[RMDB]
RNA sequence: GGGAACGACUCGAGUAGAGUCGAAAAACUAUUUGAUCAGCUAGUUACUUCUAUCGAAUAAAGUGGCCAAAACCAACUCAUUAUAGGUCAUGAUAUAGUAAGCAGGAAGUAUUGGAAUAUGUGGAGAGGUGGUAAAUAUCUUCGGAUAUUUACCACCAAAAGAAACAACAACAACAAC
Reactivity to DMS in 0.01 (KOAc 150mM, MgCl2 10mM, bicine 150mM(pH8.5), 24C), signal-to-noise 2, nucleotides 027 to 126: a040c040u000a010u030u000u050g020a080u010c070a110g020c070u000a070g000u000u000a000c010u000u000c090u010a100u120c090g020a080a020u010a010a050a170g010u000g000g000c020c020a080a070a050a110c180c110a080a080c130u020c140a050u000u000a040u020a110g000g030u010c010a060u030g000a180u000a020u000a090g030u000a060a070g000c130a090g010g000a030a010g010u000a030u000u020g010g000a070a060u000a050u010g010u000g020g010a150g020a150
Reactivity to 2A3 in 0.01 (KOAc 150mM, MgCl2 10mM, bicine 150mM(pH8.5), 24C), signal-to-noise 3, nucleotides 027 to 126: a000c060u060a080u050u080u210g140a160u190c040a000g110c010u110a030g060u050u060a010c000u020u010c030u040a180u120c020g070a030a020u040a050a080a020g010u000g000g040c010c000a000a050a100a140c070c060a060a090c070u080c170a080u110u200a120u120a200g000g010u000c020a000u020g030a010u040a010u020a040g120u040a110a000g070c030a030g030g000a020a000g000u010a080u040u060g010g010a070a010u140a110u290g050u050g010g040a130g010a060